[RMDB]
Chemical mapping of a 207-nucleotide RNA with DMS and 2A3.
It was measured as part of the RMDB library OK3TST.
2A3 adducts were read by reverse transcription with SuperScript II with manganese.
For DMS, 1,667 sequencing reads were counted.
DMS adducts were read by reverse transcription with MarathonRT.
RNA sequence: GGGAACGACUCGAGUAGAGUCGAAAAUAUAAAAGAACCUCGGAUCCGGAAGGACCAGAGGGACCGCUUUUAUGCGUGAAGCUGCAGAGAAGCUGCAGCUCGGAUAUCUCCCGUCCGAUACGCAACAGGAACCUCUGGCGAGGACCAAGGGAGGGGAAUGGAAAAUAUGAUUCGUCAUAUUUUCCAUAAAAGAAACAACAACAACAAC
Reactivity to DMS in 0.01 (KOAc 150mM, MgCl2 10mM, bicine 150mM(pH8.5), 24C), signal-to-noise 1, nucleotides 027 to 156: u000a160u000a110a060a120a120g000a180a190c010c000u010c000g020g020a090u000c010c020g020g080a200a170g020g010a090c010c000a050g030a030g010g000g000a120c020c070g020c150u000u000u000u000a100u000g040c030g000u020g010a210a080g050c010u000g000c000a000g020a300g010a150a300g020c000u000g010c000a050g000c020u000c060g020g000a010u000a040u010c030u010c060c000c000g010u000c020c010g010a290u000a000c010g010c020a090a070c140a110g030g000a060a300c000c010u010c020u000g010g000c020g010a070g030g020a090c060c000a020a050g020g020g000a000g000g020g000g010a040
Reactivity to 2A3 in 0.01 (KOAc 150mM, MgCl2 10mM, bicine 150mM(pH8.5), 24C), signal-to-noise 2, nucleotides 027 to 156: u090a010u030a000a130a020a060g100a090a040c010c030u010c060g000g070a170u040c020c020g030g130a050a070g050g020a040c010c010a010g000a000g000g000g000a010c010c000g010c060u110u190u120u150a070u150g010c000g000u020g070a070a020g000c000u010g000c010a010g090a030g080a290a050g100c000u000g010c000a000g000c000u000c000g000g000a010u020a050u040c030u000c040c000c010g010u000c010c010g000a000u040a130c000g010c020a000a100c010a150g050g000a030a060c000c000u000c000u020g040g000c010g010a030g000g000a000c000c020a020a040g040g000g010a060g000g010g010g020a040